[RMDB]
RNA sequence: GGGAACGACUCGAGUAGAGUCGAAAAGAUAUGGACAAGAACUACGAAAUCUCCAGGCAAUGAUGUCGGAAACGAUUGAGCCUGGAUCUUUCGCUUGUCCUAAGUCAAACCCCGCUUCGGCGGGGAAGUUCACUAAAUGCUUCGGCAUUUAGUGAACAAAAGAAACAACAACAACAAC
Reactivity to DMS in 0.01 (KOAc 150mM, MgCl2 10mM, bicine 150mM(pH8.5), 24C), signal-to-noise 2, nucleotides 027 to 126: g000a040u000a300u000g010g030a050c000a020a010g000a170a090c110u010a300c070g020a000a000a010u000c240u000c010c000a020g010g020c010a200a170u010g000a100u010g000u000c010g020g010a070a070a140c000g030a000u000u020g000a140g000c000c000u020g000g010a010u010c060u000u000u000c000g000c010u010u000g020u000c010c000u000a020a050g020u000c090a100a070a150c000c000c000c000g020c010u000u030c170g010g020c010g020g000g010g030a000a030
Reactivity to 2A3 in 0.01 (KOAc 150mM, MgCl2 10mM, bicine 150mM(pH8.5), 24C), signal-to-noise 2, nucleotides 027 to 126: g010a030u050a020u160g010g000a000c010a000a010g010a150a140c160u190a050c300g010a000a010a000u060c020u000c010c020a000g000g000c010a060a300u210g030a030u120g090u000c010g000g050a070a080a000c030g030a000u000u090g020a010g000c010c000u000g000g000a000u000c010u000u000u000c010g030c030u000u010g010u040c000c000u000a110a020g000u010c000a000a040a300c000c010c000c020g010c010u060u090c250g180g000c000g030g000g000g000a010a020
Structure probing data (DMS and 2A3) for a 177-nucleotide construct. For DMS the reverse transcriptase was MarathonRT. The reactions ran in a buffer of 150 mM KOAc, 10 mM MgCl2 and 150 mM bicine (pH 8.5), at 24 C. For 2A3 the reverse transcriptase was SuperScript II with manganese.